RNA sequence: GGGAACGACUCGAGUAGAGUCGAAAAGAUAUGGAUGAGGAACUACUUCGUAGCUUCAUCGAUCCUGCUUAGCUAUCGGAAACGAUAGCUAAGCAGGGGAGAAGUCAGGAAGCCUCAUCCUAAGUCAUCAUGGUAUAUGCUUCGGCAUAUACCAUGAAAAAGAAACAACAACAACAAC
Reactivity to DMS in 0.01 (KOAc 150mM, MgCl2 10mM, bicine 150mM(pH8.5), 24C), signal-to-noise 2, nucleotides 027 to 126: g010a040u000a300u000g010g000a020u000g020a030g000g000a090a000c040u020a300c010u000u010c000g000u000a300g010c000u000u010c000a260u000c290g010a060u010c000c000u000g010c000u000u000a000g000c010u000a000u000c000g010g010a140a100a170c000g000a000u000a000g010c000u000a000a000g000c000a000g000g000g000g000a000g010a030a010g000u000c020a240g000g010a010a000g000c020c000u000c000a000u000c000c000u010a020a110g010u000c050a230
Reactivity to 2A3 in 0.01 (KOAc 150mM, MgCl2 10mM, bicine 150mM(pH8.5), 24C), signal-to-noise 2, nucleotides 027 to 126: g110a010u070a020u240g000g020a000u010g020a010g030g020a090a080c050u200a050c000u300u000c020g160u060a000g000c030u000u080c000a190u300c050g010a010u070c010c000u000g000c000u000u000a000g000c000u010a000u000c010g040g030a150a070a000c020g010a020u000a000g040c000u000a010a000g000c010a000g000g000g000g000a030g030a010a020g080u160c050a030g000g180a000a000g000c000c000u020c000a010u020c000c000u000a070a000g040u040c020a110

Structure probing data (DMS and 2A3) for a 177-nucleotide construct. It was measured as part of the RMDB library TTRINS. For 2A3, 3,047 sequencing reads were counted. For 2A3 the reverse transcriptase was SuperScript II with manganese. Values cover nucleotides 27 to 126.